[RMDB]
RNA sequence: GGGAACGACUCGAGUAGAGUCGAAAAGAAUAUACGGACCUCCCUACUCAACCUGGUGGAUUUAGCAGGAUCUGAAAGGCAAAAAGAUACCCAUGCAGAAGGGAUGAGAUUGAAGGAAGCAGGUAACAGAUAAACAAUGCUUCGGCAUUGUUUAUCUAAAAGAAACAACAACAACAAC
Reactivity to 2A3 in 0.01 (KOAc 150mM, MgCl2 10mM, bicine 150mM(pH8.5), 24C), signal-to-noise 1, nucleotides 027 to 126: g030a060a020u150a020u060a170c030g120g000a070c050c010u000c030c010c000u000a020c020u020c030a000a060c060c020u020g010g120u100g030g020a070u000u000u090a070g020c030a040g000g000a030u000c010u020g110a110a100a020g100g010c060a030a030a000a120a030g060a010u150a110c020c000c010a020u140g000c010a040g030a130a030g000g030g000a010u080g010a070g020a040u060u150g030a020a000g010g000a000a050g010c040a010g000g070u000a030a070c020
Reactivity to DMS in 0.01 (KOAc 150mM, MgCl2 10mM, bicine 150mM(pH8.5), 24C), signal-to-noise 3, nucleotides 027 to 126: g030a160a110u010a080u010a090c080g040g020a130c140c030u000c000c020c010u040a140c040u000c090a060a120c050c030u010g020g000u030g020g010a070u000u000u010a080g020c060a110g000g000a040u000c020u000g000a070a050a090g010g010c100a020a030a070a100a030g010a090u010a110c030c010c040a110u000g030c070a080g010a090a070g000g000g010a100u000g000a050g020a090u000u020g010a040a080g010g000a030a050g030c070a030g010g020u000a070a090c210
This 177-nucleotide RNA was probed chemically with 2A3 and DMS. The data come from the RNA Mapping Database (RMDB), library OK2TRN. 2A3 is a SHAPE reagent: it acylates the 2'-hydroxyl of flexible nucleotides of all four kinds. DMS adducts were read by reverse transcription with MarathonRT. Values cover nucleotides 27 to 126. The reactions ran in a buffer of 150 mM KOAc, 10 mM MgCl2 and 150 mM bicine (pH 8.5), at 24 C.